[RMDB]
RNA sequence: GGGAACGACUCGAGUAGAGUCGAAAAGUGAAAGCUCCUUCUCUCGCAAUGUGUAACUCAUGAUUCUCAUGACCCCUGGUUGGAUAGAUCCGGACUAGGAGCCAGGGGGCCUCUGAUUCUGCCAGCCAAAACUGUCGUAAGUUCGCUUACGACAGAACUACCCAGUUAGAUUCGUCUAACUGGGUAGAAAAGAAACAACAACAACAAC
Reactivity to 2A3 in 0.01 (KOAc 150mM, MgCl2 10mM, bicine 150mM(pH8.5), 24C), signal-to-noise 5, nucleotides 027 to 156: g080u070g030a110a010a030g030c030u060c000c030u060u030c040u000c020u030c030g020c030a070a150u080g050u020g030u120a060a050c030u020c050a030u080g040a130u200u050c090u020c060a040u070g040a070c000c000c000c020u000g000g040u050u060g140g030a120u040a130g070a080u030c040c050g030g070a070c070u060a040g030g000a000g000c000c000a010g000g010g000g000g000c000c010u030c030u030g040a090u080u020c020u080g010c020c020a030g010c030c010a040a060a070a120c000u010g000u000c010g000u000a000a010g000u010u100c180g010c160u010u000a000c000g000a000c000a000g000a000a010
Reactivity to DMS in 0.01 (KOAc 150mM, MgCl2 10mM, bicine 150mM(pH8.5), 24C), signal-to-noise 1, nucleotides 027 to 156: g050u020g000a070a120a210g020c050u010c030c010u000u000c020u000c020u000c020g060c000a100a080u000g010u010g020u010a050a080c010u000c030a040u010g030a090u000u000c030u000c030a080u010g000a110c010c000c000c020u000g000g030u010u010g000g030a250u000a060g000a100u010c050c020g000g010a180c070u000a070g080g050a180g030c010c010a040g000g000g010g010g000c090c020u010c020u000g020a200u010u000c030u000g000c030c020a070g040c040c050a030a030a030a180c010u010g000u000c000g030u010a000a010g040u000u010c300g010c040u000u020a010c000g000a010c000a000g010a020a090